[RMDB]
Source information:
Structure probing data (DMS and 2A3) for a 177-nucleotide construct. Reactivities are given for positions 27 through 126. For DMS the reverse transcriptase was MarathonRT.
RNA sequence: GGGAACGACUCGAGUAGAGUCGAAAAGCGGUGACGUUGAGGGCUAAUUUCUGACACUUCGAGAUAUGUUUUGUAGGAUUGUCGUCCUAUUUACGUGUUUAAGCCUGGGGAGAGGUGUAAUAGCGAGGUACAGAAUCUUUUUCGAAAGAUUCUGUACAAAAGAAACAACAACAACAAC
Reactivity to DMS in 0.01 (KOAc 150mM, MgCl2 10mM, bicine 150mM(pH8.5), 24C), signal-to-noise 8, nucleotides 027 to 126: g010c060g010g010u000g000a060c080g010u000u010g000a080g010g000g010c040u010a050a100u020u010u010c060u020g010a090c070a050c070u010u010c060g010a100g000a060u010a040u010g000u010u010u000u010g010u010a030g000g000a040u030u020g020u030c200g000u000c000c000u000a020u000u000u010a020c040g020u010g000u000u000u020a080a120g000c030c020u000g010g000g000g000a090g000a060g000g000u010g000u010a040a050u010a080g010c080g010a080g010
Reactivity to 2A3 in 0.01 (KOAc 150mM, MgCl2 10mM, bicine 150mM(pH8.5), 24C), signal-to-noise 9, nucleotides 027 to 126: g030c020g010g030u040g020a050c030g020u050u120g040a060g020g010g000c030u060a070a110u040u100u050c060u060g030a010c010a010c050u060u130c070g100a080g030a090u100a040u180g110u050u100u080u070g040u030a020g010g030a030u020u130g160u140c130g000u010c000c000u010a050u040u100u030a040c040g010u030g060u040u050u080a050a010g020c010c000u020g000g000g020g010a080g000a020g030g000u050g010u060a060a100u040a030g060c050g020a030g070